Structure probing data (DMS and 2A3) for a 207-nucleotide construct.
For 2A3 the reverse transcriptase was SuperScript II with manganese.
Values are in units of 0.01, from 0 to 300, in steps of 10.
[RMDB]
RNA sequence: GGGAACGACUCGAGUAGAGUCGAAAAGGUGGAGCGUCUCGCAGUAAAUUAGGAAUUCAGAAUGAAAACGUAGAGUUUAUUUGGGUUUUUAGUGACACCUCAGGAUUAUUAUACAGCAGUGUCAGACACAGCUCAAAGUAAUGAUGACUGCUCCCCCUGUGCUUCCAAAUUUCGAUUUGGAAGCACAAAAAGAAACAACAACAACAAC
Reactivity to DMS in 0.01 (KOAc 150mM, MgCl2 10mM, bicine 150mM(pH8.5), 24C), signal-to-noise 1, nucleotides 027 to 156: g000g000u010g000g000a180g050c070g030u000c050u000c000g010c090a120g030u030a050a100a120u010u000a110g080g010a010a030u000u000c050a090g020a070a110u000g000a120a030a060a090c060g010u000a120g020a290g040u000u000u000a140u020u000u010g030g030g040u000u000u000u000u000a030g000u010g010a070c080a020c030c010u000c010a110g000g010a110u000u000a120u000u000a120u010a100c080a060g010c030a010g050u000g000u050c140a170g020a300c140a040c080a000g000c010u030c010a090a080a150g000u000a020a050u010g000a140u010g000a060c020u030g030c000u000c020c000c010c000c150
Reactivity to 2A3 in 0.01 (KOAc 150mM, MgCl2 10mM, bicine 150mM(pH8.5), 24C), signal-to-noise 2, nucleotides 027 to 156: g000g000u000g000g000a010g000c000g020u000c000u020c020g000c070a110g020u150a050a090a150u110u140a080g080g000a060a030u130u100c060a070g150a300a210u150g010a090a090a060a020c030g050u050a130g000a010g140u090u060u030a000u010u050u030g000g000g000u000u000u000u000u130a120g020u050g010a000c000a000c000c010u060c020a010g070g020a010u030u060a020u060u070a070u300a160c070a010g080c000a010g030u000g010u010c000a010g060a120c060a000c000a070g010c000u000c020a050a000a000g010u050a130a070u060g020a020u110g000a000c030u140g000c000u000c000c010c010c000c000
Description: DMS adducts were read by reverse transcription with MarathonRT. For 2A3, 802 sequencing reads were counted. Reactivities are given for positions 27 through 156. The RNA was probed in 150 mM KOAc, 10 mM MgCl2 and 150 mM bicine (pH 8.5) at 24 C.